[RMDB]
An RNA of 177 nucleotides, treated with 2A3 and DMS and read out base by base. It was measured as part of the RMDB libraries RFM100 and RFMREP.
RNA sequence: GGGAACGACUCGAGUAGAGUCGAAAAGAAAAGGCAUGAUUGAGGUUGCGACUUUUUCGUUUUUGCUUUUGCAUGGAUAAUUCAUCCAUGCACAUCUCACUUUAUUGGACCUUCAAGAUUGGUUUCCGAUUCUAUUCGCGUUCGCGCGAAUAGAAUCAAAAGAAACAACAACAACAAC
Reactivity to 2A3 in 0.01 (KOAc 150mM, MgCl2 10mM, bicine 150mM(pH8.5), 24C), signal-to-noise 5, nucleotides 027 to 126: g050a000a120a000a000g030g030c030a010u040g020a120u050u050g020a010g000g070u090u050g040c030g040a090c050u110u070u020u050u090c050g040u040u060u020u050u090g060c030u090u090u070u030g000c000a000u000g000g000a030u050a150a150u300u220c110a010u000c000c000a000u000g010c010a000c000a000u010c000u010c020a050c010u050u140u100a140u070u150g060g050a100c010c000u010u000c070a020a090g050a210u070u130g050g000u020u030u010c020c030
Reactivity to DMS in 0.01 (KOAc 150mM, MgCl2 10mM, bicine 150mM(pH8.5), 24C), signal-to-noise 1, nucleotides 027 to 126: g000a060a030a090a030g000g020c020a060u000g060a060u050u000g000a000g000g010u000u030g000c020g020a130c180u000u000u000u030u000c060g000u080u070u000u040u000g000c170u090u010u000u010g000c000a000u000g020g040a020u050a060a210u060u010c220a100u000c000c000a000u010g000c000a000c300a080u000c020u020c000a120c080u000u000u000a060u000u000g000g030a070c000c000u010u030c090a020a070g000a120u000u000g000g000u000u000u000c110c060
The reactions ran in a buffer of 150 mM KOAc, 10 mM MgCl2 and 150 mM bicine (pH 8.5), at 24 C. DMS adducts were read by reverse transcription with MarathonRT.